[RMDB]
RNA sequence: GGGAACGACUCGAGUAGAGUCGAAAAACCGAGUUCGCUCGGUAACGCACCUUUGUGUGGGUCCAAAGACAUGCUCUUUGUACAUACCCAUUGGGUAUGGAACAUGAGCAACAGCUUUGGAGCCCACACUCUGGUCUCUCCACAUCUUCGGAUGUAAGGUUAAAUACACAUUCGUGUGUAUUUAACCAAAAGAAACAACAACAACAAC
Reactivity to 2A3 in 0.01 (KOAc 150mM, MgCl2 10mM, bicine 150mM(pH8.5), 24C), signal-to-noise 8, nucleotides 027 to 156: a000c000c000g000a010g010u140u160c250g050c120u010c000g000g000u020a050a010c080g010c040a010c010c000u010u020u010g000u000g000u000g000g000g010u010c010c000a000a010a000g020a090c060a120u070g000c000u010c020u060u180u100g000u010a010c000a000u000a000c000c010c130a300u160u300g000g000g000u010a000u000g000g020a080a010c010a010u030g000a000g000c000a010a010c020a010g020c000u000u010u000g000g040a040g120c010c000c000a000c000a000c000u000c000u010g000g000u010c010u000c000u000c040c020a030c000a020u000c010u060u090c270g130g010a010u040g040u110a130a180
Reactivity to DMS in 0.01 (KOAc 150mM, MgCl2 10mM, bicine 150mM(pH8.5), 24C), signal-to-noise 2, nucleotides 027 to 156: a050c030c000g020a030g050u010u010c300g030c000u010c000g020g010u000a020a010c100g050c060a060c010c000u000u010u000g000u000g060u000g000g000g030u000c010c000a020a020a020g010a060c050a300u000g030c000u000c000u010u000u010g020u010a110c010a020u000a010c000c000c000a300u010u000g060g010g010u000a000u010g010g000a130a050c040a060u000g000a000g010c020a020a060c090a150g000c000u000u000u000g010g020a060g030c000c010c010a000c000a010c000u000c020u010g000g010u000c030u000c040u000c000c090a010c020a030u000c020u010u010c300g010g000a040u000g000u010a120a220